[RMDB]
RNA sequence: GGGAACGACUCGAGUAGAGUCGAAAAGAUAUGCCACCGACUUAUAGAGCAGAGAGGCACCUAUGAGUUGAGUUCAGGACUACGGUUUUUGACUGCGGAUACUUCCUGGACUCGUAGUAAGGAGCCUCUGGUUUGUGUCUUUCGAGACACAAACCAGAAAAGAAACAACAACAACAAC
Reactivity to 2A3 in 0.01 (KOAc 150mM, MgCl2 10mM, bicine 150mM(pH8.5), 24C), signal-to-noise 1, nucleotides 027 to 126: g020a040u130a010u140g090c010c010a060c070c010g020a060c060u160u110a000u110a060g070a010g040c130a000g020a000g000a030g070g000c000a110c020c000u000a000u010g150a080g150u130u180g000a000g040u070u050c000a000g000g020a020c060u080a020c070g040g000u080u010u030u090u300g190a130c000u000g010c040g000g020a150u120a060c040u020u020c000c000u000g020g000a000c000u000c060g000u000a020g000u000a000a120g040g000a000g000c000c000u020
Reactivity to DMS in 0.01 (KOAc 150mM, MgCl2 10mM, bicine 150mM(pH8.5), 24C), signal-to-noise 1, nucleotides 027 to 126: g050a110u030a100u000g000c000c070a020c120c010g030a130c060u050u080a120u010a060g060a260g040c030a080g020a110g030a030g000g000c000a110c000c000u000a030u100g000a120g050u000u000g000a010g020u000u000c000a000g000g000a050c250u000a160c110g020g000u000u010u130u020u010g010a040c000u000g040c010g000g000a110u000a050c300u010u000c000c000u020g000g000a000c000u000c000g020u000a170g010u000a030a120g010g030a060g000c000c000u000
The record gives the reactivity of an RNA of 177 nucleotides to 2A3 and DMS.
The reactions ran in a buffer of 150 mM KOAc, 10 mM MgCl2 and 150 mM bicine (pH 8.5), at 24 C.
The 2A3 profile rests on 528 reads.
For DMS the reverse transcriptase was MarathonRT.
2A3 adducts were read by reverse transcription with SuperScript II with manganese.
It was measured as part of the RMDB library RFM100.